RNA sequence: GGGAACGACUCGAGUAGAGUCGAAAACGCUGGGCUCGAAGGUGGCUAGUCCAAAUUGAGUAGAAGUCUGAAGCGCGCACGGACUUCUACAAUGAUGUUUGGAGCUAGUGUUACAGCGAGCCUGUGCUGAAGCGCGCACGGCAACCGAAAGGUGCGAGUAAUGUGCGUACUUCGGUACGCACAUUACAAAAGAAACAACAACAACAAC
Reactivity to 2A3 in 0.01 (KOAc 150mM, MgCl2 10mM, bicine 150mM(pH8.5), 24C), signal-to-noise 3, nucleotides 027 to 156: c080g030c030u030g000g000g040c000u010c020g080a040a070g260g100u300g300g000c000u010a000g010u000c000c000a020a000a000u130u150g060a030g010u010a000g020a000a000g000u000c000u040g050a250a030g000c010g000c000g000c000a010c020g020g020a000c000u000u000c010u010a000c000a000a130u150g020a040u150g030u010u000u000g010g000a100g070c000u000a010g020u000g130u180u110a030c040a040g020c000g000a000g000c000c010u030g030u090g000c040u120g060a100a060g010c000g010c010g000c000a000c030g020g000c060a080a140c010c010g030a100a020a010g020g000u030g010c040g000a050
Overview
Chemical mapping of a 207-nucleotide RNA with 2A3. 2A3 adducts were read by reverse transcription with SuperScript II with manganese. The data come from the RNA Mapping Database (RMDB), library RNAMAK. The 2A3 profile rests on 2,025 reads. Reactivities are given for positions 27 through 156.